Background
An RNA of 177 nucleotides, treated with 2A3 and DMS and read out base by base.
RNA sequence: GGGAACGACUCGAGUAGAGUCGAAAACGAUGAAGCCUGCCCAGCGGGGCUUGGCGGUCAUGGGCUUUCUCUCCGGAGGGAGAGAAAGUACCAUGAUAGCUGGGGGAAUCGGCGAGGCCCGGAAGGGGUAGGUUUAAUAGUUCGCUAUUAAACCUACAAAAGAAACAACAACAACAAC
Reactivity to 2A3 in 0.01 (KOAc 150mM, MgCl2 10mM, bicine 150mM(pH8.5), 24C), signal-to-noise 2, nucleotides 027 to 126: c020g020a020u130g090a100a040g010c000c030u030g020c040c050c000a050g090c070g030g020g040g030c050u080u110g080g010c030g000g010u000c000a000u000g000g010g020c000u010u000u000c000u000c000u030c010c020g080g170a210g140g110g000a000g020a000g020a020a010a000g000u010a040c020c000a010u000g000a000u010a020g030c050u020g010g010g000g000g030a020a130u080c010g020g000c030g070a050g010g050c010c010c010g040g060a100a040g040g000g010
Reactivity to DMS in 0.01 (KOAc 150mM, MgCl2 10mM, bicine 150mM(pH8.5), 24C), signal-to-noise 3, nucleotides 027 to 126: c080g000a100u010g010a140a150g010c020c020u000g000c020c020c020a150g020c080g030g030g000g020c040u000u000g000g010c030g000g040u000c010a010u000g000g000g000c000u000u010u000c010u000c000u000c010c000g020g040a200g020g000g000a010g010a010g000a010a000a010g020u010a020c010c010a000u000g010a010u010a070g030c040u000g010g000g020g010g000a170a050u000c040g000g000c040g000a100g010g010c020c020c020g020g030a070a100g000g010g010
It was measured as part of the RMDB library RFMREP. Conditions: 150 mM KOAc, 10 mM MgCl2 and 150 mM bicine (pH 8.5), 24 C.